The record gives the reactivity of an RNA of 207 nucleotides to 2A3 and DMS.
High 2A3 reactivity points to a flexible backbone, as in loops and unpaired stretches.
The data come from the RNA Mapping Database (RMDB), library M2RFPK.
The RNA was probed in 150 mM KOAc, 10 mM MgCl2 and 150 mM bicine (pH 8.5) at 24 C.
2A3 adducts were read by reverse transcription with SuperScript II with manganese.
DMS adducts were read by reverse transcription with MarathonRT.
RNA sequence: GGGAACGACUCGAGUAGAGUCGAAAAGUUUACGCUCCAAGAUCGGUGGCUAGCAGCCCUAUCAAUAUCUAGGAGAACUGUGCUAUGUUUAGAAGAUUAGGUAGUCUCUAAACAGAACAAUUUACCUCAUACGUUAGGACGUUCGCGUCCUAACGAAGAUUACAUUUGUCUUCGGACAAAUGUAAUCAAAAGAAACAACAACAACAAC
Reactivity to 2A3 in 0.01 (KOAc 150mM, MgCl2 10mM, bicine 150mM(pH8.5), 24C), signal-to-noise 9, nucleotides 027 to 156: g020u050u070u100a060c060g010c010u000c010c010a050a020g010a060u090c120g060g070u150g060g010c020u030a050g040c070a020g010c040c010c010u080a070u090c070a080a080u070a030u230c030u050a050g010g010a020g020a050a050c070u090g020u030g060c030u050a020u090g010u010u000u000a070g000a270a010g000a030u050u040a030g030g030u030a020g010u000c000u000c000u000a000a000a000c010a030g030a040a020c090a030a030u030u070u070a030c010c010u070c050a100u100a150c020g000u000u000a000g000g000a010c000g010u030u040c170g020c010g090u000c000c000u000a000a000c000g000a000a000
Reactivity to DMS in 0.01 (KOAc 150mM, MgCl2 10mM, bicine 150mM(pH8.5), 24C), signal-to-noise 3, nucleotides 027 to 156: g000u000u010u000a090c100g020c010u000c010c020a100a170g020a050u000c150g020g000u000g030g000c040u010a190g030c080a270g020c020c030c020u010a170u000c050a080a120u010a080u000c060u010a100g000g030a300g030a030a050c050u000g000u010g020c010u010a120u000g020u000u000u010a000g020a050a130g010a030u000u000a130g040g010u000a160g000u000c010u000c000u000a000a010a010c010a030g010a090a020c040a020a080u020u010u010a100c030c020u000c080a150u010a200c020g000u000u000a010g020g010a060c010g000u000u010c300g030c030g060u000c000c000u000a000a000c000g010a020a050